An RNA of 177 nucleotides, treated with 2A3 and DMS and read out base by base. DMS adducts were read by reverse transcription with MarathonRT. It was measured as part of the RMDB library TTRDES. 2A3 adducts were read by reverse transcription with SuperScript II with manganese.

RNA sequence: GGGAACGACUCGAGUAGAGUCGAAAAAAGAUAUGGAGAGGACUACCCACCUGACCUCGGGACACGAAGAACUCCGUUCGGAAACGAACGGAGGGAGUGUCAUUCAGAGGUCCUCUCCUAAGUCAAAGCUAGAAUAAAGGUUCGCCUUUAUUCUAGCAAAAGAAACAACAACAACAAC
Reactivity to 2A3 in 0.01 (KOAc 150mM, MgCl2 10mM, bicine 150mM(pH8.5), 24C), signal-to-noise 2, nucleotides 027 to 126: a010a000g040a020u080a050u100g000g000a000g000a010g000g010a010c010u070a140c070c100c070a060c010c040u000g010a060c020c090u150c270g250g180g010a010c000a000c020g300a300a040g000a030a000c000u000c000c010g000u000u000c000g010g000a020a030a020c010g000a000a000c010g040g000a000g000g000g000a020g000u000g020u000c000a010u030u030c000a010g000a000g020g020u020c000c000u010c000u000c000c000u000a010a000g040u050c060a180a060a000
Reactivity to DMS in 0.01 (KOAc 150mM, MgCl2 10mM, bicine 150mM(pH8.5), 24C), signal-to-noise 3, nucleotides 027 to 126: a090a160g010a010u020a070u010g010g000a020g030a020g000g000a030c000u010a110c050c070c120a300c050c000u000g000a030c180c120u000c170g020g010g020a010c010a000c000g000a070a220g000a170a170c000u000c010c000g010u000u010c000g000g000a040a030a090c010g030a000a000c000g010g010a010g000g000g000a010g000u000g010u010c010a100u000u000c010a020g010a180g010g000u000c000c010u000c000u000c000c000u010a000a090g010u000c030a120a140a180